[RMDB]
RNA sequence: GGGAACGACUCGAGUAGAGUCGAAAAGCAUCUGGAGGCUCAGCAGAUGUAGAGGUGAAGAUUGCAGGCUCAGAGUUAGACAAGGCUGAGUUCAAAUCUUGGCUUUACUGCUUACUAGCUGUGUGGCCUCAUUCCAGAACUUCGGUUCUGGAAUGAGAAAAGAAACAACAACAACAAC
Reactivity to DMS in 0.01 (KOAc 150mM, MgCl2 10mM, bicine 150mM(pH8.5), 24C), signal-to-noise 3, nucleotides 027 to 126: g010c080a090u000c050u000g000g020a090g000g000c010u000c050a080g010c010a010g000a060u000g010u000a020g020a090g000g010u010g000a040a040g000a050u000u010g000c290a140g020g000c010u000c020a000g010a050g010u010u000a090g010a180c270a090a090g010g000c010u000g000a000g000u000u010c130a180a020a050u010c000u000u000g000g030c000u000u000u010a110c060u000g020c050u000u030a150c070u000a090g040c020u000g000u010g020u010g000g010c050
Reactivity to 2A3 in 0.01 (KOAc 150mM, MgCl2 10mM, bicine 150mM(pH8.5), 24C), signal-to-noise 1, nucleotides 027 to 126: g030c020a060u070c040u120g070g020a030g050g000c050u000c050a000g000c000a000g000a050u070g000u000a040g020a010g100g040u100g100a020a000g000a040u020u090g020c110a020g000g040c000u000c000a000g020a000g000u050u090a040g030a130c110a070a050g080g030c010u000g000a000g010u000u110c010a030a010a080u030c010u010u000g080g000c000u080u050u080a150c030u030g050c030u040u060a160c050u050a050g040c030u010g040u060g050u080g100g020c000